About this RNA
This 177-nucleotide RNA was probed chemically with 2A3 and DMS. The reactions ran in a buffer of 150 mM KOAc, 10 mM MgCl2 and 150 mM bicine (pH 8.5), at 24 C. For 2A3 the reverse transcriptase was SuperScript II with manganese.

RNA sequence: GGGAACGACUCGAGUAGAGUCGAAAAGAUAUGGAUUUGACGAGCGAAGAACAUGCUAGGGGUCGGAAACGACUACCAAACAUGGGAGCUCGGAGAAUCCUAAGUCAAAGCGUUCUUCGGAACGCAACCAAGACAUCUACUUCGGUAGAUGUCUUGGAAAAGAAACAACAACAACAAC
Reactivity to 2A3 in 0.01 (KOAc 150mM, MgCl2 10mM, bicine 150mM(pH8.5), 24C), signal-to-noise 2, nucleotides 027 to 126: g040a000u040a020u140g000g000a030u020u020u040g020a010c010g000a000g010c020g160a300a050g010a090a000c010a000u020g000c010u010a000g000g010g020g000u000c000g020g040a040a080a010c000g020a010c000u300a300c030c030a000a050a030c020a000u010g010g000g010a010g000c010u000c030g000g010a030g010a010a000u000c000c000u020a110a030g030u030c080a110a110a030g000c000g010u000u000c010u010u070c200g150g000a000a000c010g000c010a000a000
Reactivity to DMS in 0.01 (KOAc 150mM, MgCl2 10mM, bicine 150mM(pH8.5), 24C), signal-to-noise 3, nucleotides 027 to 126: g030a010u010a300u020g010g000a010u010u000u020g000a300c060g030a010g020c020g000a130a220g000a140a230c010a000u020g030c020u000a300g000g000g010g000u000c000g000g000a060a080a210c000g010a010c000u010a070c000c010a030a060a160c040a000u000g010g000g010a080g000c000u000c000g000g000a300g000a020a010u000c000c000u000a020a120g010u000c020a060a100a150g020c000g000u000u000c000u000u010c180g010g000a000a000c000g000c000a020a050